[RMDB]
RNA sequence: GGGAACGACUCGAGUAGAGUCGAAAAGAUAUGGAGCGUACUCCCCACCGUCCAUGGAGGUAUGAAGCGGAGGUCGGAAACGACCUCCGGGUACCUAUGAAGUGGACGAGGUACGCUCCUAAGUCAAAACGUACUCUGACUUCGGUCAGAGUACGAACUUAAUCGAAAAGUUCGCUUUUCGAUUAAGAAAAGAAACAACAACAACAAC
Reactivity to DMS in 0.01 (KOAc 150mM, MgCl2 10mM, bicine 150mM(pH8.5), 24C), signal-to-noise 1, nucleotides 027 to 156: g010a140u000a080u000g000g000a000g050c040g050u020a020c030u020c100c140c020c070a300c230c000g010u000c000c010a020u000g000g000a070g000g020u000a050u000g020a070a240g020c040g080g020a040g020g060u000c010g060g030a120a090a300c010g030a060c010c010u000c000c010g000g020g000u000a010c000c000u010a230u000g040a190a300g000u010g000g000a020c020g010a110g010g010u010a010c010g010c000u000c010c020u000a010a110g000u000c040a100a050a110a130c000g020u000a000c000u000c020u000g000a000c010u000u000c300g050g000u010c010a000g000a030g010u000a020c000g010a000a070
Reactivity to 2A3 in 0.01 (KOAc 150mM, MgCl2 10mM, bicine 150mM(pH8.5), 24C), signal-to-noise 3, nucleotides 027 to 156: g110a030u210a130u280g010g000a000g000c000g000u010a020c010u180c050c040c010c020a010c000c010g000u000c010c000a000u010g000g050a020g010g010u010a020u120g150a200a090g200c010g020g000a010g010g000u000c000g010g010a020a070a070c010g000a000c000c000u000c000c020g010g010g000u010a000c000c000u160a300u160g010a040a000g010u000g010g000a000c010g000a000g000g000u000a000c010g000c000u000c000c000u000a010a000g030u050c050a040a010a100a120c010g000u010a000c000u000c000u000g010a020c000u120u140c300g060g000u000c010a000g000a000g000u010a000c010g000a000a000